The record gives the reactivity of an RNA of 177 nucleotides to 2A3 and DMS. DMS adducts were read by reverse transcription with MarathonRT. Values cover nucleotides 27 to 126. The data come from the RNA Mapping Database (RMDB), library TTRDEL.
[RMDB]
RNA sequence: GGGAACGACUCGAGUAGAGUCGAAAAGAUAUGGAAUGUGCAAGUCUACAAUGGCUUUGAUCUCGGAAACGAGGGAGCCAUGUAGUCACCACAUUCCUAAGUCAAAACAGCUGGUUCGCCAGCUGAAUCUCUUAAUCCGGUUCGCCGGAUUAAGAGAAAAAGAAACAACAACAACAAC
Reactivity to 2A3 in 0.01 (KOAc 150mM, MgCl2 10mM, bicine 150mM(pH8.5), 24C), signal-to-noise 2, nucleotides 027 to 126: g000a000u030a000u090g000g010a020a000u000g000u030g040c090a280a300g050u000c000u020a000c150a290a300u020g020g000c090u160u160u130g100a100u020c000u000c000g000g110a070a140a020c010g010a000g000g050g000a000g000c000c010a010u000g000u000a010g000u000c020a040c120c000a000c000a010u000u000c000c000u000a090a000g030u050c030a010a030a120a180c000a010g030c000u000g000g120u070u110c290g070c070c020a020g000c000u000g000a010a050
Reactivity to DMS in 0.01 (KOAc 150mM, MgCl2 10mM, bicine 150mM(pH8.5), 24C), signal-to-noise 1, nucleotides 027 to 126: g000a030u020a300u000g000g000a000a000u010g000u010g010c100a130a140g000u000c000u000a010c000a040a070u000g000g000c000u000u000u000g010a070u000c020u000c000g010g000a060a080a180c010g000a000g020g010g000a010g010c010c000a000u000g010u010a010g010u000c030a120c300c000a000c000a000u000u000c000c000u030a010a050g030u000c050a110a110a080a190c000a030g010c010u000g000g010u010u030c300g040c000c000a020g010c000u010g010a050a100